[RMDB]
RNA sequence: GGGAACGACUCGAGUAGAGUCGAAAACGAAGAACAUUCAUUACGCUUAGGCAGUAAAGCUGUUGAGCAGAUCGCAUUAGAAGAAGUUGAUUGGUCACAAUUCAGCCACGUUUUAUUUGCCGGUAAAAGAUCAGCGUACUUUCGAGUACGCUGAUCUAAAAGAAACAACAACAACAAC
Reactivity to DMS in 0.01 (KOAc 150mM, MgCl2 10mM, bicine 150mM(pH8.5), 24C), signal-to-noise 1, nucleotides 027 to 126: c100g010a130a010g000a090a050c080a050u000u040c090a130u000u000a040c050g000c060u000u000a150g050g010c010a030g010u000a020a040a040g050c030u000g020u010u000g010a130g000c130a130g010a020u010c090g000c130a100u010u010a100g000a090a110g010a010a110g010u000u000g030a070u000u000g020g020u000c190a090c110a030a100u020u000c030a030g040c010c080a050c110g000u090u010u000u000a040u030u000u000g020c020c020g000g030u000a050a070a180
Reactivity to 2A3 in 0.01 (KOAc 150mM, MgCl2 10mM, bicine 150mM(pH8.5), 24C), signal-to-noise 1, nucleotides 027 to 126: c020g030a000a030g020a070a040c030a090u020u110c020a060u020u180a010c030g070c100u080u180a030g000g000c020a010g010u010a010a060a060g010c040u030g010u070u050g040a040g000c070a000g010a050u070c080g080c070a070u160u180a120g130a300a000g040a240a000g130u110u190g070a160u010u260g000g050u060c040a030c070a190a090u070u040c010a000g020c040c060a050c050g040u020u000u030u000a000u110u170u080g070c000c000g000g030u100a130a100a000